[RMDB]
RNA sequence: GGGAACGACUCGAGUAGAGUCGAAAAUCACGGAGUUCGGUGCCAAAUAUGGCUACGACUUCGAGCACGAGAAGACCUACGAAAAGAUGGCUUUGGUCAACGAUGCGGUAUACGUUGCCAAGGUUGGAUGGUCGCCUGAUCCGAAGGAUAUCGGUAACCAGCGUAUUCGUUUCGACGAAUACGCUGGAAAAGAAACAACAACAACAAC
Reactivity to 2A3 in 0.01 (KOAc 150mM, MgCl2 10mM, bicine 150mM(pH8.5), 24C), signal-to-noise 1, nucleotides 027 to 156: u050c010a070c000g040g000a010g020u280u140c040g000g040u060g000c000c000a000a300a080u300a200u100g000g000c050u090a040c000g020a000c000u000u000c000g000a010g020c190a060c120g010a030g010a140a000g000a000c000c020u150a020c250g070a100a100a010a040g140a140u240g040g010c010u070u000u000g000g010u230c110a000a000c000g080a030u200g120c070g020g000u210a120u070a080c000g020u000u000g010c000c000a000a000g000g000u040u020g060g080a070u000g000g000u010c000g110c070c000u050g070a120u000c020c030g020a010a000g010g070a070u120a040u270c010g000g010u060a030a030